RNA sequence: GGGAACGACUCGAGUAGAGUCGAAAAAAGUCAAGGUCAUCGACUACUCCACGUUCAUGCUGUGGUUCGAGCAGUUCAAGCACACACAGUUUGCACCUGAACGCACGGGCAUGUUCGAUGCGAUCAUGAAACGUGCAGCCGAGGACAUCACGCCUGACGUCCCUUAAGUGUUCGCACUUAAGGGACGAAAAGAAACAACAACAACAAC
Reactivity to 2A3 in 0.01 (KOAc 150mM, MgCl2 10mM, bicine 150mM(pH8.5), 24C), signal-to-noise 2, nucleotides 027 to 156: a000a000g060u060c070a060a020g010g000u050c010a100u050c050g040a030c040u030a000c020u100c050c000a020c060g030u060u030c010a030u020g010c000u020g000u080g160g020u110u100c150g070a060g020c050a030g020u170u160c080a090a040g000c010a020c010a010c000a010c000a140g000u020u060u060g020c050a050c000c020u100g000a030a000c070g000c140a010c030g050g030g000c010a020u070g090u020u020c030g100a210u120g090c040g030a020u050c000a020u080g040a080a020a040c010g010u010g000c010a030g000c030c000g020a060g080g020a010c000a050u140c060a040c100g050c000c040u000g030a040